[RMDB]
RNA sequence: GGGAACGACUCGAGUAGAGUCGAAAAGGUCGGUGUUUCGACACCGACCACUUACCCAGAAUGUUCCUCGGUAUAUAAAACAAACCCUUGGAAACAAGGGAAUACGAAUCGUGUUCGCACGAUUCAACAUUUGAUGAAGCUUCGGCUUCAUCAAAUGAAAAGAAACAACAACAACAAC
Reactivity to DMS in 0.01 (KOAc 150mM, MgCl2 10mM, bicine 150mM(pH8.5), 24C), signal-to-noise 3, nucleotides 027 to 126: g020g020u000c010g000g020u010g020u000u000u010c160g000a070c000a010c000c000g010a000c020c010a010c070u000u000a070c010c010c000a210g020a100a100u020g010u000u010c010c020u000c120g030g020u010a030u010a070u010a050a040a090a080c190a100a160a120c010c000c000u010u000g000g010a160a090a210c030a010a000g020g010g040a080a060u000a090c120g010a000a010u000c000g020u000g040u000u020c180g020c010a010c000g000a000u000u010c000a090a140
Reactivity to 2A3 in 0.01 (KOAc 150mM, MgCl2 10mM, bicine 150mM(pH8.5), 24C), signal-to-noise 2, nucleotides 027 to 126: g000g010u000c030g050g000u000g010u010u060u130c180g030a000c010a000c020c000g000a000c000c000a000c000u010u020a050c000c000c000a040g140a120a170u260g040u040u000c000c000u030c020g020g050u070a160u010a040u060a300a090a050a030c130a040a140a090c000c000c010u010u000g000g000a010a060a000c000a000a010g020g000g000a020a020u090a060c060g000a000a000u000c000g010u000g020u040u060c200g070c040a000c000g000a000u020u000c010a000a000